[RMDB]
RNA sequence: GGGAACGACUCGAGUAGAGUCGAAAACCGUCUGCUCGGUGAAGCCGUCGGGCGGGCACAGGCUUGGCUGUGUCCAGCUAGCGUAGCGCUCACUCCGACGGAUCACCGCGUUCGCGCGGCCAUCCAAGUACUGAUGCAGAUUCGUCUGCAUCAGUACAAAAGAAACAACAACAACAAC
Reactivity to DMS in 0.01 (KOAc 150mM, MgCl2 10mM, bicine 150mM(pH8.5), 24C), signal-to-noise 2, nucleotides 027 to 126: c000c010g020u000c030u010g000c000u000c020g010g000u000g000a020a160g000c030c000g000u000c010g020g000g020c120g000g000g000c000a030c000a120g000g000c010u050u040g010g020c000u020g010u040g000u050c190c020a030g000c010u000a010g040c040g010u030a100g000c080g020c000u010c030a040c060u090c020c010g000a000c000g000g010a070u000c000a020c000c000g020c140g010u000u020c150g000c080g000c050g000g020c030c080a050u000c000c010a090a180
Reactivity to 2A3 in 0.01 (KOAc 150mM, MgCl2 10mM, bicine 150mM(pH8.5), 24C), signal-to-noise 9, nucleotides 027 to 126: c010c000g020u010c040u060g020c020u010c010g000g000u020g020a200a070g090c000c000g000u000c000g000g010g010c000g000g000g000c000a010c010a020g120g030c050u220u300g070g010c000u030g020u070g100u220c130c030a020g000c020u030a010g010c050g150u130a030g060c040g000c070u020c020a030c030u090c010c000g000a000c000g000g000a010u010c000a000c000c000g000c000g000u050u090c090g000c020g000c000g060g000c010c020a050u040c020c010a070a040